[RMDB]
RNA sequence: GGGAACGACUCGAGUAGAGUCGAAAAGGCUCCACCUUCGGGUGGAGCCAUCUACCGAGAAAGCACCUCGGUAUAAAUGUGCAACCCUUGGAAACAAGGGAAUAAGCCCCUGGUUCGCCAGGGGCAAAGACAUGAAUCAGUUCGCUGAUUCAUGUCUAAAAGAAACAACAACAACAAC
Reactivity to DMS in 0.01 (KOAc 150mM, MgCl2 10mM, bicine 150mM(pH8.5), 24C), signal-to-noise 1, nucleotides 027 to 126: g010g030c000u010c000c020a030c000c020u000u000c300g020g010g040u000g000g020a000g030c000c000a000u000c030u010a180c010c000g000a000g000a110a150a180g000c010a030c020c000u000c000g030g000u030a090u010a030a020a050u020g000u020g000c000a220a230c000c000c000u000u000g000g000a100a150a120c010a000a000g000g000g010a040a020u000a130a140g010c000c000c000c010u030g000g030u010u030c180g020c010c010a000g010g040g040g000c030a000a000
Background:
This 177-nucleotide RNA was probed chemically with DMS. The data come from the RNA Mapping Database (RMDB), library M2PK50. The reactions ran in a buffer of 150 mM KOAc, 10 mM MgCl2 and 150 mM bicine (pH 8.5), at 24 C. For DMS the reverse transcriptase was MarathonRT.